An RNA of 177 nucleotides, treated with 2A3 and DMS and read out base by base. Conditions: 150 mM KOAc, 10 mM MgCl2 and 150 mM bicine (pH 8.5), 24 C. The data come from the RNA Mapping Database (RMDB), library RFM100. DMS adducts were read by reverse transcription with MarathonRT. 2A3 adducts were read by reverse transcription with SuperScript II with manganese. Values cover nucleotides 27 to 126.
RNA sequence: GGGAACGACUCGAGUAGAGUCGAAAACGUUUCGGGCUACAGCCUGUUGCUGGACUCUGUGAGACACCUGACCGACCGCUGAGCGACUGACUGGUCCACAGCGCCGGCAAGAUGAAGUUCACUGUGGGUCACUUUGCCUUUUCGAAGGCAAAGUGACAAAAGAAACAACAACAACAAC
Reactivity to 2A3 in 0.01 (KOAc 150mM, MgCl2 10mM, bicine 150mM(pH8.5), 24C), signal-to-noise 2, nucleotides 027 to 126: c010g020u000u140u060c010g000g010g000c000u100a030c060a060g020c000c000u000g040u000u110g000c000u050g000g080a130c000u000c000u030g110u070g040a120g050a010c000a070c030c000u040g100a160c000c030g040a050c010c060g010c060u060g020a030g030c130g110a000c010u010g000a080c090u190g020g020u020c000c000a000c000a000g000c030g000c030c000g000g000c000a000a020g010a100u220g020a090a000g040u020u020c040a070c050u000g000u120g010g120
Reactivity to DMS in 0.01 (KOAc 150mM, MgCl2 10mM, bicine 150mM(pH8.5), 24C), signal-to-noise 1, nucleotides 027 to 126: c160g000u000u000u000c080g000g000g030c000u000a110c080a140g000c000c020u010g030u000u000g050c000u000g010g000a000c000u000c000u000g000u010g000a080g000a080c120a080c050c010u010g000a250c040c040g000a040c290c000g080c020u000g000a050g020c030g000a060c000u000g010a060c190u070g000g090u000c000c130a260c050a000g060c040g050c100c000g000g010c130a010a010g000a040u030g000a190a140g000u000u000c000a090c060u000g000u000g000g020